[RMDB]
RNA sequence: GGGAACGACUCGAGUAGAGUCGAAAAGAUAUGGAGUUAGGUCUUCGAUAAGCUAGUGUCGGAAACGACAUUUAGCUUUUGACGAAGACUAACUCCUAAGUCAAAUCGUACAGUUCGCUGUACGAAAUCGUAGUAUGCCGUUCGCGGCAUACUACGAAAAAGAAACAACAACAACAAC
Reactivity to DMS in 0.01 (KOAc 150mM, MgCl2 10mM, bicine 150mM(pH8.5), 24C), signal-to-noise 2, nucleotides 027 to 126: g020a040u000a300u030g000g010a030g000u000u000a000g010g020u020c000u000u010c000g040a080u030a030a010g020c000u000a000g000u000g010u000c010g020g000a040a060a080c010g000a030c010a000u010u010u010a010g010c000u000u000u000u000g010a300c130g000a020a010g000a140c000u010a000a010c000u010c000c000u000a000a030g000u000c010a110a160a180u010c010g020u000a000c000a020g030u000u020c300g060c000u020g000u010a000c010g020a010a060a040
Reactivity to 2A3 in 0.01 (KOAc 150mM, MgCl2 10mM, bicine 150mM(pH8.5), 24C), signal-to-noise 2, nucleotides 027 to 126: g000a000u040a020u090g000g000a030g000u000u000a110g040g300u040c000u020u010c020g180a190u060a300a020g020c000u000a010g000u000g000u000c020g020g000a010a030a030c020g000a030c000a000u110u110u090a000g010c010u000u010u030u090g210a140c030g000a000a000g000a000c000u010a000a000c000u030c000c000u000a010a000g010u000c020a020a000a170u060c010g030u000a000c000a010g020u080u040c170g080c270u000g030u000a000c010g000a050a010a000
Source: RMDB library TTRDES, as collected in RNAgym. The record gives the reactivity of an RNA of 177 nucleotides to DMS and 2A3. For DMS, 1,523 sequencing reads were counted. For DMS the reverse transcriptase was MarathonRT.